[RMDB]
RNA sequence: GGGAACGACUCGAGUAGAGUCGAAAACGCUGUGCGCACUGCGCGUACGUACAGUAGAUGGCCAUGGCCGCGCGUACGAUCUCUGGCCGCGCACGUACAUAGGUACCGUACGAGGCCUAGGCCCGUAAUAGCGUACUCACUUCGGUGAGUACGCUAUAAAAGAAACAACAACAACAAC
Reactivity to 2A3 in 0.01 (KOAc 150mM, MgCl2 10mM, bicine 150mM(pH8.5), 24C), signal-to-noise 1, nucleotides 027 to 126: c010g010c020u010g000u010g000c010g050c020a040c050u110g000c030g040c080g190u040a020c000g010u010a000c000a000g010u100a060g030a250u180g010g000c000c020a070u040g000g000c030c010g000c070g000c030g010u000a000c010g040a090u030c110u030c040u140g110g010c040c000g000c050g020c010a090c020g010u130a050c020a070u210a030g000g090u050a100c000c050g000u010a010c010g000a010g000g020c000c050u040a110g010g000c040c000c010g010u070a070
Reactivity to DMS in 0.01 (KOAc 150mM, MgCl2 10mM, bicine 150mM(pH8.5), 24C), signal-to-noise 2, nucleotides 027 to 126: c070g030c010u010g000u010g020c000g000c050a070c060u020g050c150g050c030g070u000a020c000g000u020a010c000a020g000u000a090g010a190u000g010g040c000c020a260u000g050g000c040c020g000c160g010c060g000u010a000c000g000a060u020c030u000c070u020g050g010c110c030g030c040g030c030a020c050g000u000a100c070a100u010a050g020g010u000a020c150c030g000u020a020c040g010a220g010g000c000c010u000a300g020g000c000c000c140g000u000a070